The record gives the reactivity of an RNA of 177 nucleotides to DMS and 2A3. For 2A3, 23,608 sequencing reads were counted.
RNA sequence: GGGAACGACUCGAGUAGAGUCGAAAAUCAUUGGCUUCGCUGCGCGCUGCGUUGGCUAGGCUUCAGAUGCUUCGUACUGUUGCCAACGUUGCAAUUUCCAAACGCUAAUGCGAAAGUGUGCAAACAAUCAUCCCAUUUAAUUCGUUAAAUGGGAUGAAAAAGAAACAACAACAACAAC
Reactivity to DMS in 0.01 (KOAc 150mM, MgCl2 10mM, bicine 150mM(pH8.5), 24C), signal-to-noise 9, nucleotides 027 to 126: u010c080a110u000u010g010g010c040u000u000c040g010c030u000g010c140g010c060g020c030u000g000c010g010u000u000g010g010c010u000a110g010g010c060u000u010c120a090g020a130u010g010c110u000u000c110g020u000a090c100u010g000u000u000g010c010c010a040a030c030g010u000u000g010c050a100a100u000u000u000c050c050a070a080a120c080g010c020u000a070a090u010g010c020g010a040a050a080g020u010g020u000g010c110a080a070a080c200a070a110
Reactivity to 2A3 in 0.01 (KOAc 150mM, MgCl2 10mM, bicine 150mM(pH8.5), 24C), signal-to-noise 9, nucleotides 027 to 126: u080c020a030u040u150g110g010c020u040u020c030g020c040u040g020c020g000c000g010c030u030g000c010g010u010u020g010g010c020u040a050g050g010c000u110u040c030a070g060a220u140g040c020u060u110c040g070u090a110c040u130g240u300u080g010c010c000a010a010c020g010u010u030g020c020a030a070u030u060u010c020c020a070a050a030c030g000c030u110a140a030u130g000c010g030a040a020a020g070u080g040u060g080c040a050a090a070c020a030a090
Background: The data come from the RNA Mapping Database (RMDB), library M2PK90. For DMS, 31,573 sequencing reads were counted. 2A3 adducts were read by reverse transcription with SuperScript II with manganese.